[RMDB]
RNA sequence: GGGAACGACUCGAGUAGAGUCGAAAAUAGCAUACCUGAUAUCGCCUCCCUGGAAGAGGUGCCUAAGAUCUUCGAGGGUCUCGGUCGCGACGAGAAGCGCGCGGCAAACUCCCUGCAAGGCAACGGAGACGGAGAAGAGAGUCAGUCGGCGCUCGUGCGCUGUUAUAGCUUUCGAGCUAUAACAGCGAAAAGAAACAACAACAACAAC
Reactivity to DMS in 0.01 (KOAc 150mM, MgCl2 10mM, bicine 150mM(pH8.5), 24C), signal-to-noise 1, nucleotides 027 to 156: u000a090g020c040a100u000a140c020c020u060g070a100u000a100u010c010g030c000c000u000c020c010c020u000g020g010a100a050g010a080g020g010u000g010c050c030u000a060a080g010a100u010c000u000u000c060g010a140g000g020g030u000c010u000c060g000g040u000c020g000c050g030a120c050g000a160g000a120a090g000c060g010c040g060c030g040g010c010a020a030a060c040u000c000c000c000u020g000c040a080a110g000g030c030a100a080c040g010g000a120g030a110c030g030g030a200g010a070a020g000a060g020a090g060u000c020a140g020u000c040g000g010c010g010c040u010c040g020u000g000
Reactivity to 2A3 in 0.01 (KOAc 150mM, MgCl2 10mM, bicine 150mM(pH8.5), 24C), signal-to-noise 3, nucleotides 027 to 156: u140a000g060c040a030u060a100c000c010u070g050a070u060a030u170c040g030c020c010u010c030c040c050u030g080g020a070a020g020a020g040g010u050g000c010c000u140a200a110g040a140u040c010u020u070c120g080a060g020g000g050u020c050u030c080g050g000u030c030g000c020g020a140c020g020a050g050a200a060g080c050g000c000g000c000g080g000c000a000a050a110c030u040c000c010c000u030g060c020a110a070g070g000c000a040a040c060g010g040a040g000a040c050g060g030a080g010a080a030g030a010g010a020g040u050c060a020g000u040c020g020g020c020g010c010u030c030g080u040g030
The record gives the reactivity of an RNA of 207 nucleotides to DMS and 2A3. The DMS profile rests on 2,758 reads. For 2A3, 2,036 sequencing reads were counted. The reactions ran in a buffer of 150 mM KOAc, 10 mM MgCl2 and 150 mM bicine (pH 8.5), at 24 C.